Annotation
Chemical mapping of a 207-nucleotide RNA with 2A3 and DMS. For 2A3 the reverse transcriptase was SuperScript II with manganese. For 2A3, 405 sequencing reads were counted. Conditions: 150 mM KOAc, 10 mM MgCl2 and 150 mM bicine (pH 8.5), 24 C. Values are in units of 0.01, from 0 to 300, in steps of 10.

RNA sequence: GGGAACGACUCGAGUAGAGUCGAAAAGUCUACUAAUAUGAAGUACUUAAUACAUAUUUUCAGUAACGAUUUAGCCUUAUUACCUAUUAAUAAGUGCCUGUCGUUGGAUAGGUAAUCAACUGUUUUCUUAAUACAUUCGAUGGUUGGUAAUUUACUCACACCCACUACUUUUCGAAGUAGUGGGUGUAAAAGAAACAACAACAACAAC
Reactivity to 2A3 in 0.01 (KOAc 150mM, MgCl2 10mM, bicine 150mM(pH8.5), 24C), signal-to-noise 1, nucleotides 027 to 156: g020u020c060u100a040c000u050a030a050u070a030u180g060a110a000g090u070a130c040u060u020a080a060u200a230c070a020u270a050u090u080u040u150c080a030g000u040a120a000c030g000a000u040u020u210a010g010c000c000u000u000a040u020u030a070c010c050u120a110u300u080a160a050u030a040a000g060u050g020c030c030u090g000u090c030g030u110u040g070g000a000u010a090g070g010u030a100a000u020c050a060a080c020u010g060u100u040u000u000c030u040u120a090a130u070a120c030a100u040u190c080g010a050u070g010g000u000u010g000g040u000a070a080u040u080u030a070c020u040c050
Reactivity to DMS in 0.01 (KOAc 150mM, MgCl2 10mM, bicine 150mM(pH8.5), 24C), signal-to-noise 1, nucleotides 027 to 156: g030u000c040u000a080c060u000a060a120u000a080u000g000a140a120g000u010a100c040u000u000a100a140u010a280c080a070u000a030u000u000u020u000c060a140g010u010a010a090c000g000a100u000u000u000a010g000c030c010u000u010a040u000u010a040c160c120u000a110u000u010a000a030u010a000a020g040u010g040c010c080u010g000u000c030g050u000u000g020g090a080u000a040g010g030u000a040a060u000c060a020a040c010u000g020u000u000u020u000c070u020u000a020a120u000a070c080a160u000u000c040g020a090u020g000g010u000u000g000g010u000a030a060u000u000u000a050c030u000c030